[RMDB]
RNA sequence: GGGAACGACUCGAGUAGAGUCGAAAAAGGAUGUUCCAAUGGGCAAUCCGCAGCCAAGCCCCUACGUGUGGUGUCCGUAAUACAGACAUUCCAUAUGGGGAAGGUUCAGAGACUAAAUGGGUGUGGGUGCGUUACUCUCGAAGUGACAAGCUUAAGACGUUUAAGUUAGGUUCGCCUAACUUAAACGAAAAGAAACAACAACAACAAC
Reactivity to DMS in 0.01 (KOAc 150mM, MgCl2 10mM, bicine 150mM(pH8.5), 24C), signal-to-noise 2, nucleotides 027 to 156: a050g030g010a110u000g030u000u000c010c030a060a080u000g040g020g000c030a080a080u000c050c060g070c040a150g000c010c020a090a180g020c070c010c020c000u000a040c050g060u000g000u000g000g020u000g010u010c010c030g020u000a140a190u010a300c160a040g010a020c000a000u000u020c070c000a050u000a060u000g010g000g070g010a110a070g020g010u000u000c040a130g000a180g000a110c010u000a090a120a120u000g000g020g020u030g030u020g000g000g000u000g020c160g020u000u000a020c010u010c050u020c050g010a090a070g030u000g010a050c020a070a170g020c080u000u000a050a130g040a220
Reactivity to 2A3 in 0.01 (KOAc 150mM, MgCl2 10mM, bicine 150mM(pH8.5), 24C), signal-to-noise 2, nucleotides 027 to 156: a010g130g010a080u090g040u080u070c070c020a000a070u230g000g010g020c020a030a090u000c020c030g000c020a010g050c000c040a050a060g010c000c000c010c000u030a050c100g040u030g030u080g010g000u000g000u000c000c000g040u070a030a030u080a110c010a020g000a000c000a000u230u140c060c000a020u030a030u120g020g000g000g000a000a030g020g000u000u040c060a030g030a010g010a120c030u130a110a040a100u090g040g000g000u090g030u040g040g000g020u020g030c050g010u040u000a040c000u000c030u080c070g070a180a010g020u000g040a020c040a050a010g000c000u090u080a100a020g140a020
This 207-nucleotide RNA was probed chemically with DMS and 2A3.
For 2A3 the reverse transcriptase was SuperScript II with manganese.